Source information
Conditions: 150 mM KOAc, 10 mM MgCl2 and 150 mM bicine (pH 8.5), 24 C. Chemical mapping of a 177-nucleotide RNA with DMS and 2A3.
RNA sequence: GGGAACGACUCGAGUAGAGUCGAAAAGAUGCGGUCUUCGCAUGGACCGCACAAUGAAGAUACGGUGCUUCUGUAUCGUACUUAUUGUUUCUGGUGCGCUGUUAACCGAGGUAAAUAAUAACCGGAGAUCUGUCGAAUGUUUCGACAUUCGACAGAUAAAAGAAACAACAACAACAAC
Reactivity to DMS in 0.01 (KOAc 150mM, MgCl2 10mM, bicine 150mM(pH8.5), 24C), signal-to-noise 4, nucleotides 027 to 126: g010a150u000g030c000g010g010u010c000u000u010c150g000c120a040u020g000g000a000c000c000g010c000a040c030a050a050u050g030a070a020g000a140u000a010c020g020g030u000g000c030u010u000c220u030g020u000a010u000c010g000u000a030c040u000u010a070u000u010g010u010u000u020c020u000g000g050u000g000c030g000c200u000g000u010u020a050a150c050c010g000a160g000g010u010a030a060a070u020a120a130u030a090a120c020c010g020g000a130g000
Reactivity to 2A3 in 0.01 (KOAc 150mM, MgCl2 10mM, bicine 150mM(pH8.5), 24C), signal-to-noise 5, nucleotides 027 to 126: g100a040u030g000c000g000g000u000c000u020u050c040g020c100a030u130g020g000a000c010c000g040c000a000c000a000a060u180g040a040a030g050a050u010a010c000g000g010u010g010c020u110u150c060u200g030u010a000u010c000g000u010a000c000u020u070a060u010u050g040u010u040u000c030u050g060g000u040g030c000g000c020u050g030u120u120a070a050c040c010g020a110g010g060u070a090a100a030u180a090a130u140a130a010c010c000g000g010a080g020
DMS (dimethyl sulfate) methylates the pairing face of unpaired adenines and cytosines. It was measured as part of the RMDB libraries RFM100 and RFMREP.